[RMDB]
RNA sequence: GGGAACGACUCGAGUAGAGUCGAAAAGGGAUAAGACGUCUAACAUUCACUAAUAGAUACCACAAAAGGUGUUAGUUCAUUAAGACAGCAGGACGGUGGCCAUGGAAGUCGGUAUCCGCUAAGGAGUGUGUAACAACUCACCUGCCAAAUGGACUAGGUCCUUAAUCGGGUUCGCCCGAUUAAGGACAAAAGAAACAACAACAACAAC
Reactivity to 2A3 in 0.01 (KOAc 150mM, MgCl2 10mM, bicine 150mM(pH8.5), 24C), signal-to-noise 1, nucleotides 027 to 156: g060g010g010a070u130a140a080g030a050c050g010u050c090u060a120a020c040a180u120u100c070a030c110u030a000a100u030a110g080a070u100a110c020c010a100c130a020a110a010a070g040g000u030g000u060u010a030g000u020u020c000a000u000u090a100a040g060a140c050a040g010c000a000g030g000a000c020g070g010u000g030g030c030c000a000u040g010g030a030a000g020u020c030g000g000u050a020u010c010c010g020c050u070a010a030g040g010a000g000u010g020u000g020u070a050a000c020a010a050c030u010c000a050c000c020u000g000c000c000a000a080a000u000g000g000a000c000u020a010g020
An RNA of 207 nucleotides, treated with 2A3 and read out base by base. For 2A3, 838 sequencing reads were counted. 2A3 adducts were read by reverse transcription with SuperScript II with manganese.